RNA sequence: GGGAACGACUCGAGUAGAGUCGAAAACGAGGUGCCCUCUCGAACCGGCUGAUAGAAGCGUCGUAACUCCGAUCUUCCCAGUUCAGAGGGCACUUCUAUCUCCGGGGUCCCGUCGAGCCGAGCUUCGCUGAGUGGAUCGAUUCGUCGAUCCACUCAGAAAAGAAACAACAACAACAAC
Reactivity to 2A3 in 0.01 (KOAc 150mM, MgCl2 10mM, bicine 150mM(pH8.5), 24C), signal-to-noise 3, nucleotides 027 to 126: c070g000a000g000g000u000g000c000c010c000u010c010u010c120g010a010a000c020c030g070g020c100u140g100a060u140a150g050a080a020g050c040g040u030c010g030u090a130a090c060u060c090c010g020a050u010c010u010u020c030c000c000a020g000u010u010c000a010g000a000g000g000g000c000a000c010u000u000c000u000a000u000c020u000c000c000g010g000g020g020u000c040c000c010g040u040c030g020a020g020c010c010g010a010g040c030u070u090c020g000
Reactivity to DMS in 0.01 (KOAc 150mM, MgCl2 10mM, bicine 150mM(pH8.5), 24C), signal-to-noise 2, nucleotides 027 to 126: c200g020a020g000g010u030g000c000c000c000u010c000u000c130g020a000a020c000c110g020g000c300u040g000a070u110a090g000a100a030g000c210g000u000c130g000u020a150a200c180u030c190c040g000a000u000c000u000u000c110c040c000a010g020u020u000c000a020g020a000g000g000g000c000a000c000u020u000c000u000a040u000c020u000c020c010g000g010g000g000u010c000c000c040g000u000c000g000a120g000c030c000g000a080g000c040u000u010c090g020